[RMDB]
RNA sequence: GGGAACGACUCGAGUAGAGUCGAAAAGUUAUAGCUAGUCUUGGACCGAGUUAUGAUCAAUUAAAGUUGCAGCAAGGAUUGAAUUAUUUGGUAACUAACCAAAGACAAGAAUAUAAACCAUCAGUACCUGACUUGACUAAAGAAGAAGAAGCAUUACAGGUCCCAUAAGAUUCGUCUUAUGGGACCUAAAAGAAACAACAACAACAAC
Reactivity to DMS in 0.01 (KOAc 150mM, MgCl2 10mM, bicine 150mM(pH8.5), 24C), signal-to-noise 2, nucleotides 027 to 156: g040u000u000a050u010a110g030c030u000a040g020u010c010u000u000g010g000a030c100c030g030a090g030u000u010a100u010g000a080u000c030a050a070u000u010a070a070a090g030u000u000g060c040a070g000c030a050a040g030g010a110u010u010g000a120a060u010u000a170u000u010u000g010g060u000a110a120c210u030a100a100c030c040a040a060a110g020a180c040a040a200g000a070a130u010a130u010a030a100a090c060c010a080u010c020a070g000u000a040c030c010u000g020a040c080u000u010g000a050c050u000a040a060a120g010a080a110g010a060a080g010a040a060g000c080a010u010u010a070c170
Reactivity to 2A3 in 0.01 (KOAc 150mM, MgCl2 10mM, bicine 150mM(pH8.5), 24C), signal-to-noise 1, nucleotides 027 to 156: g030u030u060a080u100a060g000c020u000a000g000u040c000u010u060g030g010a050c110c040g020a020g010u010u020a100u150g050a000u010c040a020a030u130u040a140a050a050g050u110u060g070c010a030g000c020a060a000g020g000a030u010u040g020a010a060u130u060a110u120u070u050g020g000u080a170a150c080u010a090a020c040c030a000a030a000g020a050c060a000a000g050a090a000u130a000u040a130a040a030c040c010a000u070c060a010g030u010a010c020c050u040g050a080c070u020u070g050a040c020u080a150a020a110g060a100a000g000a000a000g030a020a020g010c050a010u030u000a020c030
Annotation
Structure probing data (DMS and 2A3) for a 207-nucleotide construct. The reactions ran in a buffer of 150 mM KOAc, 10 mM MgCl2 and 150 mM bicine (pH 8.5), at 24 C. It was measured as part of the RMDB library OK3TST.